[RMDB]
RNA sequence: GGGAACGACUCGAGUAGAGUCGAAAAACAAUGGAAGAAUUCAAUACUGAAGAUCGACCGGUGACUCCACCUAUGGAAUUUUCAUGGGAAUUCGAGGAGAAAUUCGAAAGAGUACGCUCCACACGGACACGUAUAUCUGGUUCGCCAGAUAUACGUGAAAAGAAACAACAACAACAAC
Reactivity to DMS in 0.01 (KOAc 150mM, MgCl2 10mM, bicine 150mM(pH8.5), 24C), signal-to-noise 4, nucleotides 027 to 126: a040c150a060a150u060g000g010a030a220g000a030a070u020u000c010a030a130u050a120c170u000g020a010a020g000a090u010c030g010a300c020c040g020g000u000g010a090c040u020c020c080a180c050c010u000a000u020g000g030a040a080u030u020u000u010c010a000u000g010g000g000a130a080u030u030c130g010a100g020g000a060g010a070a050a010u000u000c030g010a140a150a160g000a030g040u000a080c060g000c040u000c000c000a130c100a130c150g000g000a240
Reactivity to 2A3 in 0.01 (KOAc 150mM, MgCl2 10mM, bicine 150mM(pH8.5), 24C), signal-to-noise 9, nucleotides 027 to 126: a000c090a060a090u170g030g020a020a010g020a030a050u020u020c020a050a130u100a300c140u080g010a030a000g160a300u010c000g000a010c010c010g030g030u050g060a060c010u000c010c010a020c010c000u010a010u020g010g120a130a160u170u180u090u090c010a020u030g010g000g080a050a120u160u130c070g050a110g010g020a050g010a040a080a010u040u030c010g020a020a010a000g010a000g010u050a150c010g000c000u000c010c000a020c010a000c030g070g020a010
Conditions: 150 mM KOAc, 10 mM MgCl2 and 150 mM bicine (pH 8.5), 24 C. Chemical mapping of a 177-nucleotide RNA with DMS and 2A3. DMS adducts were read by reverse transcription with MarathonRT. Reactivities are given for positions 27 through 126.